[RMDB]
RNA sequence: GGGAACGACUCGAGUAGAGUCGAAAACUCGAUCCGCCAGACCACGAUCAAUGGCCUGCCUGCCGCCACCGUGCGCGCCUCGGCUGAUCGCUGGCAGUUCGAUAUCGUCGUCAUUGGUGCGAACAAACCGUAUUAUUUAGUUCGCUAAAUAAUACGGAAAAGAAACAACAACAACAAC
Reactivity to 2A3 in 0.01 (KOAc 150mM, MgCl2 10mM, bicine 150mM(pH8.5), 24C), signal-to-noise 9, nucleotides 027 to 126: c010u010c020g010a040u010c010c010g010c000c000a000g000a030c010c030a030c080g000a010u010c020a070a120u120g050g010c000c000u020g020c010c030u050g020c030c010g020c020c010a160c050c060g050u140g060c110g000c020g040c050c010u070c030g030g000c060u040g020a040u050c020g000c000u000g000g000c000a000g000u010u000c020g020a020u060a040u230c050g020u000c000g020u000c020a110u040u220g090g000u110g040c060g020a050a030c030a070a050a030
Reactivity to DMS in 0.01 (KOAc 150mM, MgCl2 10mM, bicine 150mM(pH8.5), 24C), signal-to-noise 9, nucleotides 027 to 126: c070u000c020g010a080u000c010c020g020c010c010a040g010a080c060c110a200c040g010a030u000c050a160a100u000g010g010c080c010u010g000c080c070u010g000c030c020g020c080c030a090c140c160g010u010g010c040g010c150g010c070c080u000c100g010g000c080u010g010a030u000c170g000c040u000g010g010c010a020g000u000u000c010g010a040u010a050u000c040g000u000c190g010u000c040a180u010u000g010g010u010g010c040g000a040a100c130a090a090a170

Chemical mapping of a 177-nucleotide RNA with 2A3 and DMS. For DMS, 26,408 sequencing reads were counted. It was measured as part of the RMDB library OK2TST. The RNA was probed in 150 mM KOAc, 10 mM MgCl2 and 150 mM bicine (pH 8.5) at 24 C.